The data come from the RNA Mapping Database (RMDB), library OK2TRN. An RNA of 177 nucleotides, treated with DMS and 2A3 and read out base by base.
RNA sequence: GGGAACGACUCGAGUAGAGUCGAAAAAGAGGUUUUCACCAAUAAUCAAGGUACGGGACAGGCCACGUUGCUGUAGCGCAUCGGCAAUAGCUCUUGGGCCAAUAAUGCCGUCGGUCACCAUCGCCACCGUCACCUAGUUUUUCGAAACUAGGUGACGAAAAGAAACAACAACAACAAC
Reactivity to DMS in 0.01 (KOAc 150mM, MgCl2 10mM, bicine 150mM(pH8.5), 24C), signal-to-noise 2, nucleotides 027 to 126: a070g030a080g030g030u000u000u010u000c040a120c060c020a080a040u010a090a090u000c140a110a040g000g030u000a040c140g000g010g000a100c100a130g030g020c010c090a080c110g000u000u020g000c030u010g020u000a070g010c110g030c100a050u000c030g040g010c030a060a060u010a090g000c010u000c070u000u030g010g050g010c000c070a110a050u010a080a070u000g000c050c030g000u000c050g020g020u010c020a060c050c000a060u010c060g010c010c040a090c120
Reactivity to 2A3 in 0.01 (KOAc 150mM, MgCl2 10mM, bicine 150mM(pH8.5), 24C), signal-to-noise 2, nucleotides 027 to 126: a010g160a040g060g080u020u100u100u140c110a090c050c000a080a080u120a100a060u140c140a130a030g060g000u030a070c070g000g050g080a000c020a030g080g000c010c010a030c040g020u060u060g010c030u030g110u080a030g010c060g000c080a060u060c050g060g000c040a060a060u070a070g050c010u020c000u090u090g020g060g000c000c010a010a080u090a060a010u180g030c010c010g010u020c010g000g010u020c010a000c020c010a020u030c020g050c070c030a020c050
The 2A3 profile rests on 1,210 reads.